Chemical mapping of a 177-nucleotide RNA with DMS and 2A3.
Conditions: 150 mM KOAc, 10 mM MgCl2 and 150 mM bicine (pH 8.5), 24 C.
The 2A3 profile rests on 783 reads.
For 2A3 the reverse transcriptase was SuperScript II with manganese.
Source: RMDB library RFM100, as collected in RNAgym.
For DMS the reverse transcriptase was MarathonRT.

[RMDB]
RNA sequence: GGGAACGACUCGAGUAGAGUCGAAAAAUACUAUAUGGAACAUGGAAAAAGUGAAUCUUAUCUGGGGGGUGGAGCGACCGGAAGAAGACAUACGUUUUUGUGCCUAGUUCAUGAUGCAUUGUUGAAGCAGGGUCUAUUUCUUCGGAAAUAGACCCUGAAAAGAAACAACAACAACAAC
Reactivity to DMS in 0.01 (KOAc 150mM, MgCl2 10mM, bicine 150mM(pH8.5), 24C), signal-to-noise 1, nucleotides 027 to 126: a010u010a090c050u010a010u010a180u000g000g000a060a070c080a080u070g030g040a120a050a080a060a030g010u000g000a030a050u030c020u050u040a040u090c040u030g100g000g020g040g020g000u030g000g000a110g000c030g000a090c050c030g030g010a070a050g000a040a150g000a130c040a070u020a040c150g000u000u000u000u020u000g030u000g020c070c030u000a080g000u000u000c110a100u020g010a020u030g000c100a050u000u000g010u010u000g030a030a050g000
Reactivity to 2A3 in 0.01 (KOAc 150mM, MgCl2 10mM, bicine 150mM(pH8.5), 24C), signal-to-noise 2, nucleotides 027 to 126: a000u140a000c030u070a030u030a090u300g060g010a110a090c030a030u030g010g010a050a110a060a000a000g080u070g080a030a080u000c000u020u080a030u050c050u030g010g000g000g000g000g000u060g000g020a020g040c000g020a020c000c030g070g020a100a040g030a020a000g030a070c050a040u180a030c090g030u000u000u030u080u100g110u070g040c000c000u010a030g000u030u050c020a020u030g030a050u090g030c050a060u050u070g020u000u010g040a030a010g000